[RMDB]
RNA sequence: GGGAACGACUCGAGUAGAGUCGAAAAACUAUCUCUCGUUAAUCCAGAGUCCAAGCCAAAAGUAACUGCGAACAACAUCGUUCCUUUCGCUCGUAAAGCUGCUGCGGUAGCCUAAGACCUCUAAACAGGUUCGAGCACUCGUUGUCCGACUCCGUUACAAUCAAAAUGAGUUCGCUCAUUUUGAUUGAAAAGAAACAACAACAACAAC
Reactivity to 2A3 in 0.01 (KOAc 150mM, MgCl2 10mM, bicine 150mM(pH8.5), 24C), signal-to-noise 2, nucleotides 027 to 156: a000c030u050a090u100c010u000c010u030c080g110u100u070a030a010u020c000c000a030g000a000g040u020c000c010a010a010g030c010c040a060a080a010a040g080u040a070a060c070u100g040c040g040a030a030c030a040a020c010a100u050c030g030u000u050c010c000u060u200u110c080g000c010u000c010g010u040a010a010a020g010c010u010g020c010u010g030c070g180g000u020a000g010c000c000u000a020a020g010a020c010c010u000c050u120a060a120a030c060a030g000g020u010u020c000g000a000g040c000a010c000u130c090g040u020u070g020u050c040c010g010a050c030u020c020c000g020u000u010a030
Reactivity to DMS in 0.01 (KOAc 150mM, MgCl2 10mM, bicine 150mM(pH8.5), 24C), signal-to-noise 1, nucleotides 027 to 156: a040c020u000a080u010c030u010c010u000c040g000u000u000a030a050u010c000c000a060g010a050g010u000c000c040a000a080g020c020c000a050a050a090a110g020u000a020a050c040u000g020c000g020a090a100c080a080a070c100a120u000c010g060u000u000c000c000u000u020u010c050g020c030u000c040g020u000a050a040a110g020c030u000g020c010u010g030c250g070g000u010a040g000c030c020u000a040a180g000a040c020c000u000c020u010a060a120a070c030a050g050g000u000u000c010g020a070g010c010a210c240u010c080g010u000u000g000u000c000c010g010a120c060u000c020c000g010u010u000a100